[RMDB]
An RNA of 177 nucleotides, treated with 2A3 and DMS and read out base by base. For 2A3 the reverse transcriptase was SuperScript II with manganese. DMS adducts were read by reverse transcription with MarathonRT. The RNA was probed in 150 mM KOAc, 10 mM MgCl2 and 150 mM bicine (pH 8.5) at 24 C. The 2A3 profile rests on 13,328 reads.
RNA sequence: GGGAACGACUCGAGUAGAGUCGAAAAGAUAUGGAGGGAGUGCGCUGAACUGUAAGCAUCGGAAACGAUGCACAGAUACGAAUAAGCACGAGGAUCUCCUAAGUCAAAACUAGGGUUCGCCCUAGAAGCAUCUAUUUAGGUUCGCCUAAAUAGAUGCAAAAGAAACAACAACAACAAC
Reactivity to 2A3 in 0.01 (KOAc 150mM, MgCl2 10mM, bicine 150mM(pH8.5), 24C), signal-to-noise 6, nucleotides 027 to 126: g020a010u070a040u150g000g010a010g010g000g010a030g030u010g000c070g030c200u180g100a190a060c010u000g030u060a180a040g000c000a000u000c010g000g010a040a050a020c010g010a000u000g010c000a000c000a000g040a040u210a150c060g050a130a110u250a270a040g000c010a000c030g030a250g010g040a030u010c010u000c010c010u030a100a020g030u020c030a000a020a150a220c010u000a010g060g000g030u070u070c270g160c000c000c010u000a000g010a010a010
Reactivity to DMS in 0.01 (KOAc 150mM, MgCl2 10mM, bicine 150mM(pH8.5), 24C), signal-to-noise 5, nucleotides 027 to 126: g020a020u010a300u000g010g000a030g000g010g000a070g020u000g020c010g050c150u010g000a130a150c010u000g000u000a080a120g020c000a010u000c010g000g010a100a070a150c000g010a000u000g020c000a030c020a000g000a120u000a070c220g010a100a120u010a100a210g000c000a010c020g000a090g020g020a050u020c010u000c000c000u000a020a110g010u000c030a070a080a080a140c010u000a000g000g000g010u000u020c260g020c000c010c000u000a010g000a060a110